Chemical mapping of a 207-nucleotide RNA with 2A3 and DMS. The RNA was probed in 150 mM KOAc, 10 mM MgCl2 and 150 mM bicine (pH 8.5) at 24 C.

RNA sequence: GGGAACGACUCGAGUAGAGUCGAAAACAAGGUGACAUGAACAAUUCGUUGUUCAUGUCACCUUGGUUGCAGAGGUUCUAGCUACACCCUCUAUAAAAAACUAAGGACCACACGAGCUGCGAUAAGCAGGUCUCAUUUCGAUGAGACCUGCUUAUCGAAGAUUCAUUCAAUUCGUUGAAUGAAUCUUAAAAGAAACAACAACAACAAC
Reactivity to 2A3 in 0.01 (KOAc 150mM, MgCl2 10mM, bicine 150mM(pH8.5), 24C), signal-to-noise 3, nucleotides 027 to 156: c010a000a000g000g010u010g000a000c000a000u000g000a010a000c010a020a040u080u120c220g050u090u010g010u020u020c020a020u000g000u010c000a000c000c010u000u000g000g000u020u050g030c040a010g040a040g110g000u040u040c040u080a030g020c010u080a050c020a060c050c070c010u010c080u020a150u230a130a120a020a010a000a010c060u070a060a080g040g020a030c040c020a020c030a020c050g120a060g060c050u080g010c030g000a000u010a000a000g000c000a000g030g010u000c000u000c000a030u020u110u050c140g080a040u010g000a000g000a000c010c000u000g000c010u000u000a000u000c000g000
Reactivity to DMS in 0.01 (KOAc 150mM, MgCl2 10mM, bicine 150mM(pH8.5), 24C), signal-to-noise 2, nucleotides 027 to 156: c010a010a010g010g040u000g000a040c000a020u000g010a030a010c000a030a060u000u000c300g020u000u000g010u000u000c010a000u000g010u010c020a000c000c000u000u000g000g000u000u000g000c100a080g010a090g010g010u000u000c030u000a080g030c030u010a150c080a190c040c010c020u000c040u010a230u020a010a060a050a070a070a080c070u000a070a110g000g010a050c010c020a080c070a100c100g010a120g000c010u000g020c000g010a010u000a010a000g000c000a000g000g000u000c000u000c000a020u000u000u010c230g010a060u000g000a020g000a010c000c010u000g000c000u010u000a000u000c000g010
The 2A3 profile rests on 2,333 reads.